The record gives the reactivity of an RNA of 177 nucleotides to 2A3 and DMS.
For DMS, 1,466 sequencing reads were counted.
The reactions ran in a buffer of 150 mM KOAc, 10 mM MgCl2 and 150 mM bicine (pH 8.5), at 24 C.

RNA sequence: GGGAACGACUCGAGUAGAGUCGAAAAUGGCAAAGCGUUGCCGAAGCUCAUGAAGCACAUCAAUCACAACCGACGUACGCUCAGCCACAUCUCCAGCAACAAUGAGCCAAUCAGAAGGAUCAUGAGACCUAGUGGUCGUAUUCGUACGACCACUAGGAAAAGAAACAACAACAACAAC
Reactivity to 2A3 in 0.01 (KOAc 150mM, MgCl2 10mM, bicine 150mM(pH8.5), 24C), signal-to-noise 2, nucleotides 027 to 126: u070g010g000c010a060a030a010g050c100g070u050u070g040c000c000g000a050a020g020c000u010c060a160u130g130a060a030g060c020a060c020a120u070c060a100a100u150c040a040c020a120a090c050c050g040a030c030g040u050a000c050g000c000u020c030a000g000c000c000a020c000a070u000c020u010c000c020a030g010c010a000a060c010a050a130u090g000a010g050c030c000a040a080u090c010a080g130a200a060g090g000a010u020c020a020u050g060a010g050a060
Reactivity to DMS in 0.01 (KOAc 150mM, MgCl2 10mM, bicine 150mM(pH8.5), 24C), signal-to-noise 3, nucleotides 027 to 126: u000g000g000c000a030a150a150g020c110g030u020u010g010c050c020g010a150a090g020c010u010c130a060u000g000a080a110g020c070a060c160a050u000c050a080a080u000c090a100c170a100a070c050c050g000a110c140g030u000a080c070g010c020u000c060a150g010c020c000a010c100a180u000c030u000c000c020a070g000c050a030a030c130a070a070u010g010a070g010c000c020a020a130u020c090a110g000a070a070g030g020a050u000c010a050u000g020a080g010a170